[RMDB]
RNA sequence: GGGAACGACUCGAGUAGAGUCGAAAACAGGACGUUAGCAUAGGUCCAUUUUACUAUGCAGAUUGCAUCGUCGGAGACGACGUAGAGACCGCUACAGCAGGGUCGAUGACCUGCUGAAUUACACCUCUUUUCAUAGCGAGGGAUCAAGCUAUGUACACGGAUAUUAUAGUUUCGACUAUAAUAUCCGAAAAGAAACAACAACAACAAC
Reactivity to DMS in 0.01 (KOAc 150mM, MgCl2 10mM, bicine 150mM(pH8.5), 24C), signal-to-noise 3, nucleotides 027 to 156: c030a110g020g000a070c040g010u000u000a160g010c030a060u000a050g010g010u000c050c060a110u000u000u000u010a110c040u000a020u000g020c000a150g010a110u010u010g020c030a150u000c030g040u000c000g040g010a300g010a300c020g010a040c020g020u000a080g000a150g010a080c060c050g020c050u010a170c020a030g000c010a020g010g010g010u000c060g020a170u010g000a140c000c000u000g010c010u000g000a050a060u000u000a100c040a090c030c010u000c010u000u000u000u000c010a030u000a030g020c030g000a120g020g010g000a100u000c060a060a180g010c020u000a030u000g030u000a100c110a240
Reactivity to 2A3 in 0.01 (KOAc 150mM, MgCl2 10mM, bicine 150mM(pH8.5), 24C), signal-to-noise 9, nucleotides 027 to 156: c040a010g040g040a020c060g060u140u140a040g010c020a030u030a060g020g020u010c010c000a010u040u050u030u040a060c030u020a010u020g010c010a030g100a300u160u300g020c040a040u040c020g000u000c010g000g030a080g010a050c030g000a000c000g010u030a020g020a010g020a070c060c030g010c070u090a060c010a010g000c000a000g060g030g010u110c100g100a100u180g080a050c000c000u000g000c000u000g000a020a020u090u050a050c050a050c040c010u040c000u050u070u100u090c000a000u010a000g000c010g020a030g020g050g000a030u130c100a070a020g000c000u010a000u010g020u030a040c080a010
An RNA of 207 nucleotides, treated with DMS and 2A3 and read out base by base.
Reactivities are rounded to 0.1 and cut off at 0 and 3.
For 2A3 the reverse transcriptase was SuperScript II with manganese.
For DMS the reverse transcriptase was MarathonRT.
The reactions ran in a buffer of 150 mM KOAc, 10 mM MgCl2 and 150 mM bicine (pH 8.5), at 24 C.
Reactivities are given for positions 27 through 156.
The DMS profile rests on 15,782 reads.